The record gives the reactivity of an RNA of 207 nucleotides to DMS and 2A3.
It was measured as part of the RMDB library RNAMAK.
The reactions ran in a buffer of 150 mM KOAc, 10 mM MgCl2 and 150 mM bicine (pH 8.5), at 24 C.
For DMS the reverse transcriptase was MarathonRT.
2A3 adducts were read by reverse transcription with SuperScript II with manganese.
Values cover nucleotides 27 to 156.

RNA sequence: GGGAACGACUCGAGUAGAGUCGAAAAGAUAACUUCGGUUAUCAAAAAAACCUUUGUGUCAACCCUUGGUGACAUGAGUCUAGGACCCAUUGGGUCCGAUGACUCAACAGCACCAAUGUGCUUGACACUCUGGUAAAAAUAGGUGUUCGCACCUAAAUCUUGUAGUUCAGUUCGCUGAACUACAAGAAAAAGAAACAACAACAACAAC
Reactivity to DMS in 0.01 (KOAc 150mM, MgCl2 10mM, bicine 150mM(pH8.5), 24C), signal-to-noise 1, nucleotides 027 to 156: g010a000u020a000a000c000u000u000c190g040g000u000u000a040u010c020a010a000a100a130a150a150a070c000c020u000u010u000g020u000g040u000c000a040a030c020c010c030u000u000g000g010u000g000a070c120a300u000g010a020g000u000c000u020a300g000g010a010c020c000c030a300u000u020g070g020g000u020c030c030g000a050u000g000a000c000u000c010a020a040c080a110g000c060a000c000c000a020a020u010g030u020g000c060u000u000g000a060c000a030c000u000c000u000g030g010u000a010a050a100a070a140u000a030g010g000u010g000u000u000c010g050c040a010c000c000u000a010a010a160
Reactivity to 2A3 in 0.01 (KOAc 150mM, MgCl2 10mM, bicine 150mM(pH8.5), 24C), signal-to-noise 3, nucleotides 027 to 156: g010a000u010a020a010c020u060u060c220g080g000u010u030a040u020c010a050a190a140a000a000a000a010c010c000u000u000u000g010u000g000u000c000a000a020c000c000c000u000u010g000g010u020g020a130c060a130u040g000a000g000u000c000u020a020g000g000a010c020c000c080a300u140u300g020g000g000u000c010c000g000a030u120g010a000c000u010c000a000a010c030a000g020c010a000c000c000a000a000u050g000u070g040c170u000u000g000a000c010a000c000u000c000u010g020g020u060a090a030a030a050a040u100a020g000g000u000g020u060u080c300g030c090a010c010c000u010a040a090a040